[RMDB]
RNA sequence: GGGAACGACUCGAGUAGAGUCGAAAAAAAAAAACAAGCCAGUUGAAGUGGGCACUCGGUGAGAACAUGGCACCAGAGAAAGUAGACUUUGAGGACUGCAAAGAUGUUAGCGAUCUAAGACAGUAUGACAGUGAUGAACCAGAGUCUAGAUCACUAGGAUGAAUUGAUCAUUCGUGAUCAAUUCAUCAAAAGAAACAACAACAACAAC
Reactivity to 2A3 in 0.01 (KOAc 150mM, MgCl2 10mM, bicine 150mM(pH8.5), 24C), signal-to-noise 2, nucleotides 027 to 156: a000a000a000a000a000a260a040c070a040a010g060c040c010a020g010u030u080g020a050a000g040u120g000g010g000c030a020c040u050c050g010g030u070g030a050g040a060a050c050a170u040g040g000c000a020c020c010a030g000a010g000a040a080a010g030u060a060g050a070c060u030u070u070g060a070g000g050a000c060u000g070c010a010a080a070g060a000u020g010u140u050a030g000c000g050a000u010c000u000a010a110g000a000c010a020g100u130a050u120g030a020c050a020g060u010g150a190u070g040a020a000c040c000a040g000a000g100u010c020u000a010g000a020u030c000a010c040u010a000g040
Reactivity to DMS in 0.01 (KOAc 150mM, MgCl2 10mM, bicine 150mM(pH8.5), 24C), signal-to-noise 2, nucleotides 027 to 156: a000a000a030a030a030a040a090c080a040a060g050c050c020a060g000u010u010g010a080a130g000u000g020g000g010c010a080c040u000c020g030g040u000g020a130g000a080a100c060a090u010g020g000c010a060c040c000a130g020a080g000a090a040a130g000u000a030g010a060c040u000u010u000g020a160g000g000a050c010u000g000c040a060a090a070g010a070u000g020u000u000a050g050c050g020a050u010c020u000a040a100g030a050c010a110g010u010a110u010g040a050c020a080g010u010g010a090u000g020a070a050c010c020a050g000a130g000u000c010u000a060g000a020u000c020a010c020u000a060g020
This 207-nucleotide RNA was probed chemically with 2A3 and DMS. It was measured as part of the RMDB library OK3TST. Values cover nucleotides 27 to 156. For DMS the reverse transcriptase was MarathonRT. High 2A3 reactivity points to a flexible backbone, as in loops and unpaired stretches.